[RMDB]
RNA sequence: GGGAACGACUCGAGUAGAGUCGAAAAGAGUAAAUAGAGGAGUCAGGGUUCGCACCGGCUCCGCGAACCUAGGGUAACACUGACUGUGGAGCGUAAGAGAGAGCAGACGAAGAUACGUCUGCAUAGAACCCACUGCGAGGUUCGCCUCGCAGUGGGUAAAAGAAACAACAACAACAAC
Reactivity to 2A3 in 0.01 (KOAc 150mM, MgCl2 10mM, bicine 150mM(pH8.5), 24C), signal-to-noise 1, nucleotides 027 to 126: g070a000g130u230a010a090a130u130a100g220a030g170g000a020g000u010c000a050g080g000g000u090u090c020g050c020a050c090c080g110g000c010u000c000c000g000c000g000a000a000c000c010u040a030g000g250g000u270a170a000c090a000c060u050g060a000c000u080g000u010g090g010a000g050c040g050u030a130a000g060a020g030a000g000a070g060c030a000g000a000c000g010a220a010g100a160u300a030c000g000u000c000u000g000c000a000u000a110g070a110
Reactivity to DMS in 0.01 (KOAc 150mM, MgCl2 10mM, bicine 150mM(pH8.5), 24C), signal-to-noise 1, nucleotides 027 to 126: g000a110g010u030a120a140a130u010a030g000a050g000g010a000g000u030c000a110g030g000g000u000u030c030g010c080a090c110c040g040g030c010u000c020c010g010c000g000a030a050c000c020u080a080g020g000g000u000a100a090c030a150c050u000g000a020c010u010g000u000g000g020a110g000c090g030u000a080a050g000a080g000a100g000a240g020c040a000g010a000c000g010a140a200g000a250u010a080c000g000u000c000u000g010c000a000u010a050g000a100